This 177-nucleotide RNA was probed chemically with DMS and 2A3.
For 2A3, 3,496 sequencing reads were counted.
Conditions: 150 mM KOAc, 10 mM MgCl2 and 150 mM bicine (pH 8.5), 24 C.
RNA sequence: GGGAACGACUCGAGUAGAGUCGAAAAUCCUUGACACCUCCCCGUGGCUCCAGCCAGACCCUAGAGGUCAGCCUUGCGGACCAACAGGAGGACUCCCAGCUUUCCCUUUUCAAGAGGUCCCCAGACACGUAGUAAAGACCUUCGGGUCUUUACUACGAAAAGAAACAACAACAACAAC
Reactivity to DMS in 0.01 (KOAc 150mM, MgCl2 10mM, bicine 150mM(pH8.5), 24C), signal-to-noise 3, nucleotides 027 to 126: u020c000c000u010u010g020a110c150a100c050c010u030c040c010c020c060g000u020g020g000c060u000c080c060a060g000c050c050a080g020a130c040c000c030u020a100g020a280g000g000u010c030a120g010c050c060u030u020g020c080g000g010a060c020c050a060a130c090a090g000g000a150g000g000a070c050u020c030c020c000a040g000c040u000u000u000c010c000c010u020u000u020u010c080a070a090g000a120g000g000u020c010c000c000c020a130g000a140c280a110
Reactivity to 2A3 in 0.01 (KOAc 150mM, MgCl2 10mM, bicine 150mM(pH8.5), 24C), signal-to-noise 4, nucleotides 027 to 126: u000c010c010u000u030g080a050c040a040c020c020u030c010c020c020c030g050u060g060g000c030u000c010c010a030g040c000c000a030g010a060c000c000c000u100a100g060a140g090g000u010c000a010g020c000c040u080u120g060c070g030g020a030c010c030a030a070c020a010g060g020a010g010g010a030c010u000c000c000c000a020g020c030u020u020u000c020c000c000u030u050u010u120c060a090a020g020a020g040g020u020c000c010c010c000a020g040a070c040a010